[RMDB]
RNA sequence: GGGAACGACUCGAGUAGAGUCGAAAAGCUUCCGUCGAACGCGAAAGUCGGACGGCGGCCAUGAGUCGCAACGCAAAGCCGCGGCAAGUGGAGUUAGCGAGAAGAGACUAGGCUUAGGUUUCUUCAAAUUAGUGAGUGUGGUUCGCCACACUCACAACGAUCGAAAGUAGUUCGCUACUUUCGAUCGAAAAGAAACAACAACAACAAC
Reactivity to 2A3 in 0.01 (KOAc 150mM, MgCl2 10mM, bicine 150mM(pH8.5), 24C), signal-to-noise 3, nucleotides 027 to 156: g000c010u030u000c010c000g000u010c000g020a070a000c010g010c030g130a240a150a090g190u300c030g020g000a010c010g000g000c010g000g000c000c010a030u000g000a010g000u040c010g040c040a080a090c050g030c120a160a160a000g070c100c080g020c030g000g000c020a040a030g000u020g030g020a060g020u070u040a030g040c070g040a060g030a140a030g070a010g000a010c010u020a010g030g060c030u060u100a040g000g060u000u020u000c010u030u030c050a040a050a110u180u080a030g000u000g000a000g000u000g010u010g000g040u050u050c180g050c040c000a000c000a000c000u000c000a000c000a000a000
Reactivity to DMS in 0.01 (KOAc 150mM, MgCl2 10mM, bicine 150mM(pH8.5), 24C), signal-to-noise 1, nucleotides 027 to 156: g020c030u000u000c000c000g060u010c040g010a080a130c030g000c000g040a120a090a130g030u010c050g040g000a280c030g000g000c070g000g030c020c000a070u000g050a300g020u010c010g050c000a110a080c000g000c000a140a170a290g000c010c010g050c010g000g010c010a070a300g040u000g030g010a100g000u000u000a100g010c040g010a190g060a050a040g000a060g000a030c020u000a070g030g000c080u000u000a090g010g000u000u010u010c020u020u000c020a080a030a100u000u000a110g000u000g000a010g000u000g060u000g010g000u000u000c180g010c000c010a010c000a000c000u000c000a000c010a000a030